[RMDB]
RNA sequence: GGGAACGACUCGAGUAGAGUCGAAAAGAUAUGGAUCCGUAACUUCAACAGCGUACUCGGAAACGAGUUACGACAUGAAGGAUAAGGAUCCUAAGUCAAAACGAAUUGACGUUCGCGUCAAUUCGAACCACUAGAGAAGCUUCGGCUUCUCUAGUGGAAAAGAAACAACAACAACAAC
Reactivity to 2A3 in 0.01 (KOAc 150mM, MgCl2 10mM, bicine 150mM(pH8.5), 24C), signal-to-noise 2, nucleotides 027 to 126: g030a000u060a030u120g000g000a000u000c000c000g040u010a020a070c000u000u030c000a080a090c030a270g100c010g000u000a000c020u010c020g010g030a070a050a060c010g010a000g020u110u170a000c000g100a070c000a080u110g000a010a000g010g000a000u000a030a000g010g010a000u000c000c000u000a010a010g030u000c000a060a020a120a120c010g000a010a010u000u000g000a000c020g040u040u070c300g020c030g140u020c000a000a000u000u000c000g000a010a050
Chemical mapping of a 177-nucleotide RNA with 2A3.
Values cover nucleotides 27 to 126.
High 2A3 reactivity points to a flexible backbone, as in loops and unpaired stretches.
For 2A3 the reverse transcriptase was SuperScript II with manganese.
Values are in units of 0.01, from 0 to 300, in steps of 10.